[RMDB]
This 207-nucleotide RNA was probed chemically with 2A3.
It was measured as part of the RMDB library RNAMAK.
RNA sequence: GGGAACGACUCGAGUAGAGUCGAAAAGGGGUCGAGCUGGAGGGAAUACCUUAGCUUGGAUUUAUGGAGCUGAAGCCUCCACGGCUCCAUUGUCAGCUAAGGUUCCCGAUGAAGGCUCGACGGAGGCACCCAAAAGCCCGAGGUUCGCCUCGGGCAACCAUAUGAUCGAGUUCGCUCGAUCAUAUGGAAAAGAAACAACAACAACAAC
Reactivity to 2A3 in 0.01 (KOAc 150mM, MgCl2 10mM, bicine 150mM(pH8.5), 24C), signal-to-noise 2, nucleotides 027 to 156: g130g010g030g010u010c020g010a000g000c000u000g000g000a000g050g010g040a040a070u160a230c050c000u010u000a010g000c040u150u170g110g020a040u180u270u110a010u010g000g000a000g000c010u010g010a110a020g000c020c000u000c010c010a010c000g010g000c000u000c000c000a000u000u010g030u040c150a010g010c020u000a000a000g000g000u010u020c000c000c010g000a030u010g010a000a020g000g010c000u000c000g000a000c000g000g010a000g010g000c000a030c020c010c010a080a180a020a040g010c000c000c000g000a000g040g000u100u120c260g150c050c000u010c000g000g000g000c000a000a010
The reactions ran in a buffer of 150 mM KOAc, 10 mM MgCl2 and 150 mM bicine (pH 8.5), at 24 C.